The record gives the reactivity of an RNA of 177 nucleotides to DMS and 2A3. The 2A3 profile rests on 929 reads. For 2A3 the reverse transcriptase was SuperScript II with manganese. The data come from the RNA Mapping Database (RMDB), library RFM100. Reactivities are rounded to 0.1 and cut off at 0 and 3.
[RMDB]
RNA sequence: GGGAACGACUCGAGUAGAGUCGAAAAACCAAUGGGGAAACCACGUUGAGAGACCGGACCCGACAGUGAGGGACGAAAGCCAGGGUCUCGAACCGGAUUAGAUACCCGGGUAGUCCUGGCUGUAAACACACCAGGAAGUGUUCGCACUUCCUGGUGUAAAAGAAACAACAACAACAAC
Reactivity to DMS in 0.01 (KOAc 150mM, MgCl2 10mM, bicine 150mM(pH8.5), 24C), signal-to-noise 3, nucleotides 027 to 126: a120c000c020a080a060u030g000g010g000g000a100a120a090c070c050a090c230g020u010u000g010a160g020a120g000a020c020c050g000g000a110c030c000c000g000a100c150a030g020u040g020a110g030g010g010a050c050g020a090a110a020g070c000c000a020g000g020g000u070c050u030c100g010a030a280c020c000g000g000a020u000u000a100g000a130u060a080c190c000c000g000g020g010u030a080g000u000c010c000u000g000g010c010u000g020u020a000a120a010c200
Reactivity to 2A3 in 0.01 (KOAc 150mM, MgCl2 10mM, bicine 150mM(pH8.5), 24C), signal-to-noise 2, nucleotides 027 to 126: a010c040c000a000a000u090g010g000g000g030a090a000a000c010c000a150c100g040u080u060g040a150g030a040g030a030c030c000g060g070a120c000c000c000g060a030c030a080g170u060g090a090g000g000g010a010c100g120a270a060a000g000c000c000a010g000g000g060u020c040u050c160g070a070a100c000c020g000g000a020u020u040a060g090a190u060a050c000c000c000g000g000g020u100a050g010u000c000c030u030g010g000c000u000g020u050a020a010a000c110